An RNA of 177 nucleotides, treated with DMS and read out base by base. Values cover nucleotides 27 to 126. The data come from the RNA Mapping Database (RMDB), library TTRDEL. For DMS, 6,795 sequencing reads were counted.
RNA sequence: GGGAACGACUCGAGUAGAGUCGAAAAGAUAUGGACCGUAUAGGGAGCUGGUCGGAAACGACACAGCGUUGAUCUAUGACGGUCCUAAGUCAAAAGUACGGAAAAGGCUUCGGCCUUUUCCGUACAACACCUUAUGAAUCUUCGGAUUCAUAAGGUGAAAAGAAACAACAACAACAAC
Reactivity to DMS in 0.01 (KOAc 150mM, MgCl2 10mM, bicine 150mM(pH8.5), 24C), signal-to-noise 4, nucleotides 027 to 126: g000a030u010a300u000g000g010a000c000c000g010u010a040u000a000g010g000g010a020g030c000u000g000g000u000c010g000g010a090a090a200c010g010a010c000a070c000a010g010c000g020u000u010g000a020u000c010u000a010u010g010a020c010g010g000u000c000c010u000a020a070g000u000c040a090a090a150a100g010u000a010c000g000g020a010a010a010a000g000g010c000u000u000c210g020g000c000c000u000u000u000u000c000c000g020u000a000c000a070a170